[RMDB]
RNA sequence: GGGAACGACUCGAGUAGAGUCGAAAAGGGGUCCUGCGUGGAGUAGUCACCAGCGAGACCUGAAGCCUCCACGGGUCAUUUGAGCUGCAAGUCUACGUUGAAACGCAGGACGGAGGCACCCAAAAGCCAAUUGAUUUCUUCGGAAAUCAAUUGGCAAACAGUUUCAUAGUUUCGACUAUGAAACUGUAAAAGAAACAACAACAACAAC
Reactivity to 2A3 in 0.01 (KOAc 150mM, MgCl2 10mM, bicine 150mM(pH8.5), 24C), signal-to-noise 2, nucleotides 027 to 156: g020g010g000g000u000c010c000u000g010c000g010u010g000g020a030g000u000a000g000u010c010a000c060c000a020g010c000g000a160g000a120c000c000u010g010a040a000g000c000c000u000c000c020a010c040g000g000g000u010c000a020u250u140u210g020a000g000c000u020g020c030a280a300g020u010c000u000a000c010g140u120u000g000a000a000a000c000g000c000a000g000g010a000c000g000g000a000g000g000c000a010c000c000c000a050a140a000a000g000c000c000a000a000u000u000g000a000u010u010u010c010u010u050c220g120g000a010a000a000u000c000a000a000u000u000g000g010c000a010a000
Reactivity to DMS in 0.01 (KOAc 150mM, MgCl2 10mM, bicine 150mM(pH8.5), 24C), signal-to-noise 1, nucleotides 027 to 156: g020g030g060g050u000c000c000u000g020c030g010u000g030g020a110g000u000a050g020u000c000a270c230c000a010g050c000g010a190g000a000c000c020u000g000a050a140g000c040c000u020c000c010a300c080g010g000g030u030c020a300u000u000u000g020a170g070c000u000g000c000a130a170g000u000c010u010a030c000g000u010u020g020a140a210a100c010g000c020a050g000g000a010c020g000g070a040g060g000c000a100c010c020c010a070a180a070a190g040c070c000a010a000u000u000g010a030u000u000u000c010u000u010c300g050g000a020a030a010u010c000a030a000u050u000g010g040c000a010a010